[RMDB]
RNA sequence: GGGAACGACUCGAGUAGAGUCGAAAACUCUUGCACAGAAUCACCUUUCUAUAAUAACCAGUGCAAGAAGGGUUAUUAUACCAUUUAAUGUGCCGAGGCCACGCGGAGUACAAUCGAGGGUACAGCAAAAACGUGAAGUACUUCGGUACUUCACGAACAUAUUUGUACGCUUCGGCGUACAAAUAUGAAAAGAAACAACAACAACAAC
Reactivity to DMS in 0.01 (KOAc 150mM, MgCl2 10mM, bicine 150mM(pH8.5), 24C), signal-to-noise 1, nucleotides 027 to 156: c010u000c030u010u040g000c010a020c010a140g010a180a140u010c070a110c090c030u010u000u000c110u000a020u000a020a060u000a020a020c000c010a300g000u010g010c040a060a080g000a150a080g010g000g030u010u000a010u020u010a050u000a060c090c080a060u000u000u000a080a140u000g000u000g000c000c050g000a140g010g000c050c070a060c040g010c050g000g000a180g060u000a060c080a080a080u010c010g010a110g040g010g000u000a040c010a120g020c000a030a070a020a030a170c040g000u000g010a000a010g020u000a010c010u000u000c210g000g000u000a000c010u000u000c010a000c020g060a000a090
Reactivity to 2A3 in 0.01 (KOAc 150mM, MgCl2 10mM, bicine 150mM(pH8.5), 24C), signal-to-noise 3, nucleotides 027 to 156: c000u000c000u000u010g000c000a010c010a020g090a130a090u160c040a150c040c020u140u290u140c130u110a030u000a020a000u000a000a010c000c000a020g000u010g000c010a000a000g000a000a010g000g000g000u010u010a010u010u000a010u030a040c020c010a170u120u180u200a190a140u200g050u070g040c000c000g010a040g010g000c010c000a030c030g040c070g110g110a110g090u150a070c090a090a090u110c020g030a100g010g030g000u030a000c000a000g000c000a050a000a000a000a030c010g010u000g000a000a000g000u010a010c000u030u040c130g000g010u010a000c000u000u000c020a000c000g000a000a000